[RMDB]
RNA sequence: GGGAACGACUCGAGUAGAGUCGAAAAAGUUUUUAUGGGGAGCCAUAAUAUCACUCCCAAGCAGAAAUCAAAUCAAAUAAAAGACUAUUGCUUUCAUUUGCAUUUAUUUAGUCAACUAUGCCUAAAAGUACCAUCUACUUUUCGAAGUAGAUGGUACAAAAGAAACAACAACAACAAC
Reactivity to 2A3 in 0.01 (KOAc 150mM, MgCl2 10mM, bicine 150mM(pH8.5), 24C), signal-to-noise 1, nucleotides 027 to 126: a000g020u170u110u000u050u060a060u070g000g010g020g040a030g250c000c010a010u080a080a010u130a080u060c020a040c090u030c000c000c010a000a020g110c070a050g130a180a080a060u110c050a010a170a030u040c020a040a020a020u090a010a060a040a000g030a050c090u110a180u250u300g030c000u050u080u030c040a050u040u000u120g020c000a010u000u110u000a050u090u050u100a190g010u010c010a030a080c080u010a070u170g030c020c040u110a120a130a020a120
Reactivity to DMS in 0.01 (KOAc 150mM, MgCl2 10mM, bicine 150mM(pH8.5), 24C), signal-to-noise 1, nucleotides 027 to 126: a110g010u000u000u010u000u000a020u010g000g010g010g020a160g010c030c030a030u010a030a010u000a090u000c070a060c110u030c000c010c010a120a060g030c100a040g020a090a060a060u010c150a040a030a010u000c030a000a010a010u000a030a060a010a030g010a170c240u000a060u010u020g020c010u000u000u000c080a010u000u010u020g000c170a030u000u010u010a060u020u000u010a080g030u000c120a060a100c110u000a030u000g000c050c040u000a000a060a080a100
Source: RMDB library OK2TRN, as collected in RNAgym. This 177-nucleotide RNA was probed chemically with 2A3 and DMS. 2A3 adducts were read by reverse transcription with SuperScript II with manganese. Values are in units of 0.01, from 0 to 300, in steps of 10. Reactivities are given for positions 27 through 126. For DMS the reverse transcriptase was MarathonRT. The reactions ran in a buffer of 150 mM KOAc, 10 mM MgCl2 and 150 mM bicine (pH 8.5), at 24 C.